[RMDB]
RNA sequence: GGGAACGACUCGAGUAGAGUCGAAAACCCGCAAUUUGAGGUAGUAGCACAGCAGGUCACUCCAAAUGACCAUGCUAAUGCCAGAGCAUUUUCGCAUCUGGCCAGUAAACUAAUCGAGCUGGAGGUUCAUUUCUAGAUCGUUCGCGAUCUAGAAAUGAAAAGAAACAACAACAACAAC
Reactivity to 2A3 in 0.01 (KOAc 150mM, MgCl2 10mM, bicine 150mM(pH8.5), 24C), signal-to-noise 4, nucleotides 027 to 126: c010c000c010g000c040a110a160u070u060u150g080a060g010g100u080a020g000u030a020g050c060a030c030a090g010c020a000g000g000u000c000a000c030u150c080c040a040a050a090u050g000a010c010c060a070u020g000c000u040a060a020u090g000c000c000a000g000a000g020c030a030u010u090u130u280c140g010c050a290u020c010u000g000g000c000c010a040g000u070a030a050a030c030u040a070a040u080c040g010a020g030c050u030g040g030a050g090g000u010u000
Reactivity to DMS in 0.01 (KOAc 150mM, MgCl2 10mM, bicine 150mM(pH8.5), 24C), signal-to-noise 2, nucleotides 027 to 126: c000c000c000g030c130a070a010u000u040u040g000a030g030g010u030a020g020u010a130g030c030a160c230a080g000c030a020g000g020u000c020a020c070u010c300c290a030a080a260u000g000a000c000c020a100u000g000c030u000a130a050u000g000c000c000a020g010a030g030c000a140u000u010u000u020c230g000c020a080u000c000u000g010g010c000c090a080g000u010a060a050a070c030u000a130a080u000c020g000a030g050c050u000g000g000a180g010g000u030u000